[RMDB]
RNA sequence: GGGAACGACUCGAGUAGAGUCGAAAAUUUGAAGAUGGAGCCAUAGCAACCAACAUUGGAAAUGGGUUAGAGUUUGGAAGCAGUAGUACAGAAACAGGUGUCGAUGAUGCUUACCCAAUCCAAGUUAAACUUGGAUCUGGCCUUAGCUUUGACAGUACCAUGAUCCUCAAUUCGUUGAGGAUCAUGGAAAAGAAACAACAACAACAAC
Reactivity to 2A3 in 0.01 (KOAc 150mM, MgCl2 10mM, bicine 150mM(pH8.5), 24C), signal-to-noise 4, nucleotides 027 to 156: u110u060u120g070a040a040g030a030u060g000g040a020g030c030c010a050u070a050g040c030a030a040c030c000a010a090c050a110u050u080g050g030a040a070a120u070g010g020g020u080u100a060g000a040g040u020u120u100g000g020a040a000g000c020a020g020u090a000g000u030a030c040a060g080a010a110a020c030a030g050g020u020g020u060c030g020a020u090g040a030u090g060c010u010u040a040c000c000c000a000a000u000c000c000a010a000g000u050u190a210a170a110c000u000u000g000g000a010u020c110u040g000g000c010c030u070u050a020g010c000u080u050u050g050a060c070a010g020u060a070
Reactivity to DMS in 0.01 (KOAc 150mM, MgCl2 10mM, bicine 150mM(pH8.5), 24C), signal-to-noise 2, nucleotides 027 to 156: u000u000u000g020a040a010g020a060u010g000g010a160g000c070c030a030u000a060g050c070a060a200c050c020a060a030c090a130u020u000g040g030a050a090a150u000g030g020g020u000u000a110g020a090g020u000u000u000g060g010a070a130g000c020a100g060u000a090g030u010a170c040a090g000a090a070a060c030a070g010g020u010g010u000c030g010a120u010g000a090u000g010c010u000u000a030c090c000c030a010a040u000c010c020a020a000g020u000u000a070a060a300c000u000u000g000g030a020u010c080u040g010g010c070c090u000u000a070g030c000u000u000u000g000a070c080a150g010u010a210